Chemical mapping of a 177-nucleotide RNA with DMS and 2A3.

RNA sequence: GGGAACGACUCGAGUAGAGUCGAAAAGAGGGCAAGUUCGAUGACUCGGAUACCUUUUCCACAGAAGAUUCGAGAACAUCAAUGGCUAAUCUUCUAUUUCUUGUUGAUAAUAUGGGCAUGAAUAAUACUACCGGUAUGAGUUCGCUCAUACCGGUAGAAAAGAAACAACAACAACAAC
Reactivity to DMS in 0.01 (KOAc 150mM, MgCl2 10mM, bicine 150mM(pH8.5), 24C), signal-to-noise 3, nucleotides 027 to 126: g020a040g020g010g010c200a110a030g030u010u000c130g030a040u000g010a190c010u000c030g000g000a060u000a100c190c020u010u010u000u010c080c180a160c250a090g000a050a020g000a070u000u000c040g000a030g010a090a060c060a010u000c030a080a110u010g010g010c060u000a030a080u000c030u020u000c020u000a100u000u000u010c040u010u000g000u010u000g000a090u000a040a080u000a090u000g000g000g000c040a040u000g000a060a020u000a020a030u020a150
Reactivity to 2A3 in 0.01 (KOAc 150mM, MgCl2 10mM, bicine 150mM(pH8.5), 24C), signal-to-noise 1, nucleotides 027 to 126: g040a010g000g010g000c040a080a090g050u060u130c100g020a040u030g040a030c020u020c060g000g020a010u110a200c000c010u090u000u040u000c100c110a160c040a030g010a040a000g010a000u000u010c020g010a010g010a140a150c000a000u060c050a020a150u180g050g000c010u040a050a120u020c000u150u010c020u000a210u020u060u030c110u030u100g060u110u080g110a120u060a300a030u060a110u120g030g000g070c030a010u070g010a110a050u190a100a000u050a070
Annotation:
It was measured as part of the RMDB library OK2TRN. Reactivities are given for positions 27 through 126.